[RMDB]
RNA sequence: GGGAACGACUCGAGUAGAGUCGAAAACGCACUAGAGUACCGACGAUCUCUAGACUAGAGCGAUCGUACCUAGUGAUCUGUGACACGAUCAGCGAUCGUACCGACAUGGAUCCGACGUCUAGAGCCAAUGAUGACUAUCAUUCGUGAUAGUCAUCAUAAAAGAAACAACAACAACAAC
Reactivity to 2A3 in 0.01 (KOAc 150mM, MgCl2 10mM, bicine 150mM(pH8.5), 24C), signal-to-noise 9, nucleotides 027 to 126: c040g000c010a010c040u050a020g010a040g130u050a050c060c090g030a040c040g090a210u040c010u000c010u030a050g050a100c100u070a020g010a020g050c010g050a140u010c010g000u020a050c000c050u040a040g040u000g020a010u000c010u030g050u050g030a020c010a010c120g010a010u020c020a030g130c020g080a020u000c010g010u040a110c030c050g110a180c080a170u190g020g010a060u010c040c040g050a060c050g080u010c010u040a030g010a010g070c010c020a020
Reactivity to DMS in 0.01 (KOAc 150mM, MgCl2 10mM, bicine 150mM(pH8.5), 24C), signal-to-noise 9, nucleotides 027 to 126: c110g010c050a060c020u000a020g000a200g010u000a060c090c060g020a090c090g000a120u010c000u000c010u000a050g010a110c160u010a070g010a110g010c020g000a120u000c010g010u000a060c090c060u000a030g010u000g010a010u000c020u000g000u000g000a220c170a100c090g000a020u000c010a160g020c130g000a030u000c010g000u000a090c080c030g000a110c070a060u000g010g010a100u010c050c060g010a110c120g010u000c020u000a050g010a100g010c160c090a110

Chemical mapping of a 177-nucleotide RNA with 2A3 and DMS. The reactions ran in a buffer of 150 mM KOAc, 10 mM MgCl2 and 150 mM bicine (pH 8.5), at 24 C. DMS adducts were read by reverse transcription with MarathonRT. 2A3 adducts were read by reverse transcription with SuperScript II with manganese.